RNA sequence: GGGAACGACUCGAGUAGAGUCGAAAAUACAAUAGCGUAGGGAACCAAGCUAAGAGGUUGGAAGUCCAACGGUAGAGGGCUUGGUUCGCAGCUGCUCUAGAAGAGGUCCCAGUCCCUACGCCGCAAAUCUUUGAGUACGAUUCGUCGUACUCAAAGAAAAAGAAACAACAACAACAAC
Reactivity to DMS in 0.01 (KOAc 150mM, MgCl2 10mM, bicine 150mM(pH8.5), 24C), signal-to-noise 2, nucleotides 027 to 126: u010a110c050a110a050u000a100g010c000g030u000a020g000g020g010a060a030c000c010a000a030g000c010u000a090a150g030a120g040g000u000u020g000g010a270a160g010u010c010c000a000a020c010g010g000u000a080g000a050g020g010g000c010u000u000g020g030u000u000c020g020c160a060g000c050u000g000c000u010c020u000a090g000a090a130g010a050g000g000u010c030c120c010a090g040u000c030c000c000u010a030c030g010c010c100g000c220a030a110a080
Reactivity to 2A3 in 0.01 (KOAc 150mM, MgCl2 10mM, bicine 150mM(pH8.5), 24C), signal-to-noise 2, nucleotides 027 to 126: u230a000c070a020a090u090a110g000c020g020u020a010g000g010g010a000a000c000c000a000a000g000c020u080a100a010g080a100g280g050u000u010g060g070a300a080g160u190c020c000a000a000c000g080g070u140a120g020a080g160g050g000c000u020u000g010g000u010u000c010g000c010a010g060c000u040g020c000u010c040u120a250g060a300a010g000a150g000g000u050c010c000c000a000g030u000c000c000c000u010a000c010g000c010c000g050c070a060a090a060
Description
Chemical mapping of a 177-nucleotide RNA with DMS and 2A3. Conditions: 150 mM KOAc, 10 mM MgCl2 and 150 mM bicine (pH 8.5), 24 C. The data come from the RNA Mapping Database (RMDB), library M2PK90. Values cover nucleotides 27 to 126.